[RMDB]
The record gives the reactivity of an RNA of 177 nucleotides to DMS and 2A3. The reactions ran in a buffer of 150 mM KOAc, 10 mM MgCl2 and 150 mM bicine (pH 8.5), at 24 C. 2A3 adducts were read by reverse transcription with SuperScript II with manganese. It was measured as part of the RMDB library OK2TST. DMS adducts were read by reverse transcription with MarathonRT.
RNA sequence: GGGAACGACUCGAGUAGAGUCGAAAAACCAGAUUCCGGCGCUCGUGCGCAGCGAAGCGGGCCGCGGCGCGGGCAUCGUCGUGUCGCCGCUCAUCGCGCUGAUGCAGGAUCAGGUCGCCGCAUUGUAUCAGUGGUUUUAGUUCGCUAAAACCACUGAAAAAGAAACAACAACAACAAC
Reactivity to DMS in 0.01 (KOAc 150mM, MgCl2 10mM, bicine 150mM(pH8.5), 24C), signal-to-noise 2, nucleotides 027 to 126: a130c000c000a260g010a140u010u020c150c000g000g000c040g020c050u000c060g000u000g010c020g020c000a030g020c020g000a070a030g040c180g000g000g000c030c180g020c030g000g020c000g010c010g000g010g010c170a070u000c120g000u000c010g000u010g020u000c020g000c010c210g000c010u000c020a040u000c300g000c000g010c000u000g000a070u000g030c000a050g010g010a180u000c170a120g000g000u000c020g020c000c020g000c220a060u000u000g020u010a180
Reactivity to 2A3 in 0.01 (KOAc 150mM, MgCl2 10mM, bicine 150mM(pH8.5), 24C), signal-to-noise 1, nucleotides 027 to 126: a000c040c000a020g050a120u180u060c060c000g020g030c000g000c010u020c110g270u010g000c010g000c020a000g000c020g020a030a010g000c070g020g010g000c000c000g020c020g000g020c050g000c050g000g080g000c140a240u160c120g110u040c020g000u000g000u010c020g020c000c010g000c000u030c000a080u140c000g000c000g000c010u050g000a110u190g000c000a000g070g000a120u120c090a020g080g050u140c020g020c000c000g060c070a090u020u210g090u050a090